Chemical mapping of a 177-nucleotide RNA with DMS and 2A3.
[RMDB]
RNA sequence: GGGAACGACUCGAGUAGAGUCGAAAACUACCACAGUACAAUACUUCCUGAAGGUUGUGCCCACAGAGAUCCACCAGACUUUCACCACCAUAUACGCUUUUCAGUAUGCCGUCACCGAAAACGUGCAAUAGCAUACUGACUUCGGUCAGUAUGCUAUAAAAGAAACAACAACAACAAC
Reactivity to DMS in 0.01 (KOAc 150mM, MgCl2 10mM, bicine 150mM(pH8.5), 24C), signal-to-noise 2, nucleotides 027 to 126: c030u020a090c060c040a110c080a050g000u000a050c060a070a040u010a080c090u010u000c030c040u010g020a120a070g010g020u010u010g020u010g000c010c020c050a050c100a100g000a070g020a080u000c050c030a080c050c060a080g000a070c060u000u010u010c040a100c060c040a040c070c050a040u000a050u010a070c040g000c110u010u000u000u000c060a040g010u010a060u000g010c050c060g020u000c010a050c040c050g000a010a020a050a100c110g020u000g010c070a060
Reactivity to 2A3 in 0.01 (KOAc 150mM, MgCl2 10mM, bicine 150mM(pH8.5), 24C), signal-to-noise 2, nucleotides 027 to 126: c040u030a030c030c050a040c030a060g000u050a040c030a030a140u050a250c010u110u020c010c010u070g060a060a030g070g020u020u040g070u020g100c020c000c000a070c010a000g140a000g000a050u040c010c000a000c010c020a030g050a100c070u020u070u010c050a060c020c020a010c010c030a010u040a000u000a140c050g060c100u010u010u020u060c010a060g020u050a070u090g020c010c000g060u030c030a000c080c030g070a030a050a030a030c030g060u090g000c030a050
Record summary:
It was measured as part of the RMDB library OK2TST. 2A3 adducts were read by reverse transcription with SuperScript II with manganese. DMS (dimethyl sulfate) methylates the pairing face of unpaired adenines and cytosines.